The record gives the reactivity of an RNA of 177 nucleotides to DMS and 2A3.
RNA sequence: GGGAACGACUCGAGUAGAGUCGAAAAACUGACCUUCCUCAGACUGAGGACUGUUCCAGUGUAUACAUCAAGUCACUGAGGUAGGACAAAAGGUUGCUACAGUCCUAUUAUUUUAUGGUUAUUAUAAUGAUUAUCUCACAUUCGUGUGAGAUAAUCAAAAAGAAACAACAACAACAAC
Reactivity to DMS in 0.01 (KOAc 150mM, MgCl2 10mM, bicine 150mM(pH8.5), 24C), signal-to-noise 4, nucleotides 027 to 126: a080c070u000g010a090c020c010u000u000c000c000u000c000a080g020a150c140u010g010a080g000g000a070c100u000g010u000u010c130c090a100g010u010g020u010a110u020a110c080a100u000c090a080a090g010u010c050a100c070u000g010a040g000g020u000a010g010g000a100c070a040a050a090a120g010g010u000u000g010c080u000a080c140a130g000u000c000c000u010a040u000u000a090u010u010u010u020a070u000g000g000u000u000a080u000u010a110u010a080a140
Reactivity to 2A3 in 0.01 (KOAc 150mM, MgCl2 10mM, bicine 150mM(pH8.5), 24C), signal-to-noise 1, nucleotides 027 to 126: a000c040u030g090a080c000c000u020u030c010c000u000c000a060g050a090c060u110g040a030g070g000a020c000u100g060u220u090c070c020a020g020u050g010u110a140u010a230c080a110u060c060a100a030g050u060c020a010c090u000g000a000g000g010u000a000g040g000a010c050a010a150a020a000g060g000u070u100g000c010u070a020c060a060g060u000c000c000u030a090u200u010a040u030u230u010u030a200u190g030g010u070u090a120u140u070a190u180a180a090
For 2A3, 890 sequencing reads were counted. Conditions: 150 mM KOAc, 10 mM MgCl2 and 150 mM bicine (pH 8.5), 24 C. DMS adducts were read by reverse transcription with MarathonRT. It was measured as part of the RMDB library OK2TRN. For DMS, 3,335 sequencing reads were counted.